[RMDB]
The record gives the reactivity of an RNA of 177 nucleotides to 2A3. The data come from the RNA Mapping Database (RMDB), library RFM100. 2A3 adducts were read by reverse transcription with SuperScript II with manganese.
RNA sequence: GGGAACGACUCGAGUAGAGUCGAAAAAACCUAUCGGACCCGGGGGCGGUACCCGGCGCCUCCACCAGAACCCAGGACCGAUGGCCGCAGAGUGUCGGCGGUGUUGGGUUCCGGCGGGGGCGAAAUACCGACUUUAAUUCUUCGGAAUUAAAGUCGGAAAAGAAACAACAACAACAAC
Reactivity to 2A3 in 0.01 (KOAc 150mM, MgCl2 10mM, bicine 150mM(pH8.5), 24C), signal-to-noise 1, nucleotides 027 to 126: a000a000c100c010u170a150u120c090g120g040a070c010c010c000g010g000g000g010g000c020g000g000u030a040c000c000c000g000g000c000g020c020c000u000c000c000a030c010c000a000g000a010a020c000c000c000a010g000g030a000c000c000g040a030u040g000g010c010c000g100c160a150g130a090g120u280g050u040c010g030g020c150g050g000u300g300u040u000g000g000g000u030u000c000c000g000g020c010g010g000g000g020g000c000g000a030a000a000u040a010